[RMDB]
Source: RMDB library OK2TST, as collected in RNAgym.
Chemical mapping of a 177-nucleotide RNA with 2A3 and DMS.
For DMS the reverse transcriptase was MarathonRT.
For 2A3, 4,630 sequencing reads were counted.
The reactions ran in a buffer of 150 mM KOAc, 10 mM MgCl2 and 150 mM bicine (pH 8.5), at 24 C.

RNA sequence: GGGAACGACUCGAGUAGAGUCGAAAAGCCGUUCAGGCCGUGCUGACCGUUGGCGCCGGUAGCGCCUUGAGUACCGGGAUCGCCGGGGGCGCCGGGGUUGAACCCGGUCCCGCCGCCGCCGCCCGCGACUAGCUAUGUGAUUCGUCACAUAGCUAGUAAAAGAAACAACAACAACAAC
Reactivity to 2A3 in 0.01 (KOAc 150mM, MgCl2 10mM, bicine 150mM(pH8.5), 24C), signal-to-noise 2, nucleotides 027 to 126: g020c000c000g030u070u120c080a040g010g040c050c010g070u080g030c030u020g050a080c030c030g040u050u100g020g000c010g000c000c020g040g060u060a020g020c000g020c000c000u020u090g080a050g020u040a070c030c030g030g010g060a170u130c040g030c030c020g000g020g020g000g020c040g010c000c010g010g000g020g010u060u160g060a050a050c010c000c010g000g000u030c020c020c000g000c010c010g050c010c000g030c020c020g020c010c000c000g020c010g040
Reactivity to DMS in 0.01 (KOAc 150mM, MgCl2 10mM, bicine 150mM(pH8.5), 24C), signal-to-noise 5, nucleotides 027 to 126: g010c020c010g030u000u010c110a080g010g020c040c070g020u010g020c040u000g010a150c020c030g000u000u000g010g000c030g030c060c030g000g020u010a130g010c010g020c040c030u000u000g010a110g010u000a100c120c000g000g000g000a080u010c040g000c160c010g020g000g000g000g040c180g010c040c000g000g010g000g000u000u010g000a150a290c000c010c010g000g000u010c150c080c020g000c060c020g000c100c020g010c110c100g010c000c010c010g020c130g000

Values cover nucleotides 27 to 126.